[RMDB]
RNA sequence: GGGAACGACUCGAGUAGAGUCGAAAAAGAUUUAAUCCCAAAAUCCGUAUGUUGAGUCAUUUGGAGGUGGGGCCUUUGGGAGGUAAUUAGGAUUAGAUAAUGUCAUCAGGGUAGGCCCAGAUGAUGGAACUGGUGGCUUUACCAGAAGAGGAGAGACGCUUUCAUGUAAUUUCGAUUACAUGAAAGCAAAAGAAACAACAACAACAAC
Reactivity to DMS in 0.01 (KOAc 150mM, MgCl2 10mM, bicine 150mM(pH8.5), 24C), signal-to-noise 1, nucleotides 027 to 156: a120g020a060u000u010u010a050a130u000c000c000c010a110a090a060a050u000c060c060g040u000a080u000g030u000u010g020a170g020u000c020a080u000u010u010g010g000a050g000g070u000g020g040g000g060c000c080u000u000u000g020g010g050a150g000g000u000a040a090u000u000a120g000g000a180u000u000a100g030a110u010a050a090u010g030u010c020a040u010c010a060g000g010g050u000a080g040g050c070c000c020a110g000a050u010g010a090u000g010g020a180a150c050u030g000g040u010g000g000c070u000u100u000a040c040c000a090g000a130a050g010a050g000g000a130g010a140g000a120c090
Reactivity to 2A3 in 0.01 (KOAc 150mM, MgCl2 10mM, bicine 150mM(pH8.5), 24C), signal-to-noise 2, nucleotides 027 to 156: a000g050a020u080u090u260a060a070u100c000c010c020a030a000a000a210u090c080c080g050u100a120u160g080u060u040g040a010g070u020c020a090u040u090u210g020g000a030g010g050u080g000g040g000g020c040c020u190u050u040g040g030g000a000g000g010u090a150a030u110u220a050g040g020a010u020u050a040g030a040u040a090a060u160g010u060c020a040u030c030a070g070g030g050u170a060g130g000c000c010c060a010g020a020u060g010a000u050g040g000a030a060c000u000g000g000u050g020g030c050u110u050u070a070c010c010a020g020a040a010g030a040g030g010a040g040a060g000a020c070